[RMDB]
RNA sequence: GGGAACGACUCGAGUAGAGUCGAAAAAUAUUGUUUUUUCCAACAUUUAGAAUUCAUGGGGAUGCAUGCUUACACUAGUGCUGUACAAAUCAUCAACAAGCUUUCCUUACCUGUUGGGCUUGUAUUGGAACAGGACAAAGUUCGCUUUGUCCUGUUCAAAAGAAACAACAACAACAAC
Reactivity to 2A3 in 0.01 (KOAc 150mM, MgCl2 10mM, bicine 150mM(pH8.5), 24C), signal-to-noise 1, nucleotides 027 to 126: a020u160a140u100u030g080u100u080u000u030u000u050c030c000a080a000c020a020u050u140u210a170g030a110a080u070u050c040a060u050g000g000g090g000a030u030g070c020a020u080g040c020u040u050a010c010a020c050u040a030g080u040g020c030u030g060u070a020c000a020a200a010u090c000a030u030c000a030a060c000a010a030g000c000u060u060u000c010c020u060u110a140c060c040u020g050u100u140g060g000g100c040u080u090g060u050a190u060u190g110
Reactivity to DMS in 0.01 (KOAc 150mM, MgCl2 10mM, bicine 150mM(pH8.5), 24C), signal-to-noise 2, nucleotides 027 to 126: a050u020a090u010u020g000u010u000u000u000u000u000c020c020a100a050c060a050u020u000u010a090g020a070a090u000u000c060a090u000g010g000g010g000a070u000g010c130a050u000g010c160u010u010a030c070a060c040u010a090g020u010g010c110u000g010u000a010c140a040a090a070u020c050a060u000c060a070a030c030a040a030g010c020u000u000u000c040c090u000u000a100c110c110u000g000u000u000g010g000g010c120u010u000g000u010a070u010u020g010
Chemical mapping of a 177-nucleotide RNA with 2A3 and DMS. The reactions ran in a buffer of 150 mM KOAc, 10 mM MgCl2 and 150 mM bicine (pH 8.5), at 24 C. For DMS, 1,931 sequencing reads were counted. For DMS the reverse transcriptase was MarathonRT. The 2A3 profile rests on 668 reads. For 2A3 the reverse transcriptase was SuperScript II with manganese.